[RMDB]
RNA sequence: GGGAACGACUCGAGUAGAGUCGAAAAUCAAAUAACCAGCAAAAAGAAGACGAGGUAGAGCGCGCGCUCUACCAAAAGCUGGGUGUCUAAAGGCAAGUGUUGACGCCACUACACAAAUAAACAAAAAUCCUAUCUAACUGUUCGCAGUUAGAUAGGAAAAAGAAACAACAACAACAAC
Reactivity to DMS in 0.01 (KOAc 150mM, MgCl2 10mM, bicine 150mM(pH8.5), 24C), signal-to-noise 2, nucleotides 027 to 126: u050c000a060a120a110u000a040a150c000c000a000g040c000a100a070a060a090a110g000a120a080g010a090c130g000a160g030g010u000a000g010a010g000c000g050c300g000c250g000c010u000c000u000a000c000c000a000a030a030a230g010c000u000g000g010g000u030g030u010c040u000a030a080a090g010g000c030a030a090g010u010g000u000u020g000a080c050g000c140c010a050c120u010a030c080a030c070a040a070a050u010a040a070a050c060a030a160a020a050a030